[RMDB]
RNA sequence: GGGAACGACUCGAGUAGAGUCGAAAAGAGAGAGAGAGACACGCCUGAAUGGCAGCAGCAGGCCUUAGCGGCAAUGGACAGCAGGCACAGGACCAGCUUUGCCUCGAGCCGCAACGCUGAUGCCAGACAAUGGCGUAAACUUCGGUUUACGCCAUUGAAAAGAAACAACAACAACAAC
Reactivity to DMS in 0.01 (KOAc 150mM, MgCl2 10mM, bicine 150mM(pH8.5), 24C), signal-to-noise 3, nucleotides 027 to 126: g040a060g000a010g020a060g000a030g010a070g010a030c150a080c140g010c040c040u000g010a110a100u000g000g000c010a010g020c000a030g010c000a100g010g020c070c110u000u000a100g030c010g010g000c020a080a110u000g010g030a090c110a070g030c070a040g010g000c040a130c160a080g030g000a100c030c000a070g000c020u020u000u010g010c000c010u010c110g020a300g000c010c010g000c010a060a060c160g000c000u000g000a050u000g000c000c010a050g000a190
Reactivity to 2A3 in 0.01 (KOAc 150mM, MgCl2 10mM, bicine 150mM(pH8.5), 24C), signal-to-noise 2, nucleotides 027 to 126: g060a010g010a000g000a000g000a010g030a010g000a000c020a030c110g050c020c030u070g140a120a090u060g000g000c010a010g000c000a000g000c000a010g080g090c050c050u090u120a020g000c020g020g000c010a000a150u110g040g010a020c040a030g050c020a010g020g030c040a070c060a120g090g090a090c020c000a030g020c000u040u090u160g020c000c010u030c040g030a020g000c000c010g000c000a010a020c030g030c010u000g010a000u050g010c000c000a010g000a030